[RMDB]
RNA sequence: GGGAACGACUCGAGUAGAGUCGAAAACCCACCAAGUUCUUAUUAAGAGAAGCAGAGGGACUGGCCCGACGAAGCUUCAGCAACCGGUGUAAUGGCGAAAGCCAUGACCAAGGUGCUAAAUCCAGCAAGCUCGAACAGCUUGGAAUAUAAGAACAGACAUACGAUACUGAUUCGUCAGUAUCGUAUGAAAAGAAACAACAACAACAAC
Reactivity to 2A3 in 0.01 (KOAc 150mM, MgCl2 10mM, bicine 150mM(pH8.5), 24C), signal-to-noise 6, nucleotides 027 to 156: c020c000c000a020c020c040a140a040g000u000u000c000u010u030a050u060u100a110a020g040a010g000a050a000g000c000a000g010a010g010g000g000a010c020u010g020g040c000c000c000g080a150c010g000a030a000g000c000u000u000c010a000g000c000a020a050c000c010g020g000u060g120u230a090a040u000g010g000c010g040a080a010a000g000c000c000a000u010g010a000c020c000a030a080g000g000u000g000c000u010a020a020a030u010c010c000a030g170c010a180a000g000c000u100c150g170a160a070c060a050g010c000u000u010g010g020a040a010u050a000u000a020a010g000a000a000c010a010g090a030
Reactivity to DMS in 0.01 (KOAc 150mM, MgCl2 10mM, bicine 150mM(pH8.5), 24C), signal-to-noise 3, nucleotides 027 to 156: c000c010c030a180c070c080a060a210g010u010u000c010u000u000a040u000u000a100a130g020a290g000a060a020g050c000a060g000a180g000g020g020a190c100u000g000g060c050c000c030g000a180c120g020a110a140g020c000u000u010c010a060g020c000a050a040c010c030g000g060u000g030u010a010a000u010g010g010c010g020a150a100a270g030c010c000a000u000g000a050c000c030a130a070g000g010u010g050c010u000a030a050a060u000c020c040a100g040c040a040a040g010c010u000c020g040a140a190c160a130g000c000u020u000g010g010a050a100u000a040u000a020a030g000a020a000c010a160g020a240
Chemical mapping of a 207-nucleotide RNA with 2A3 and DMS. Source: RMDB library OK3TST, as collected in RNAgym. For DMS the reverse transcriptase was MarathonRT. Conditions: 150 mM KOAc, 10 mM MgCl2 and 150 mM bicine (pH 8.5), 24 C.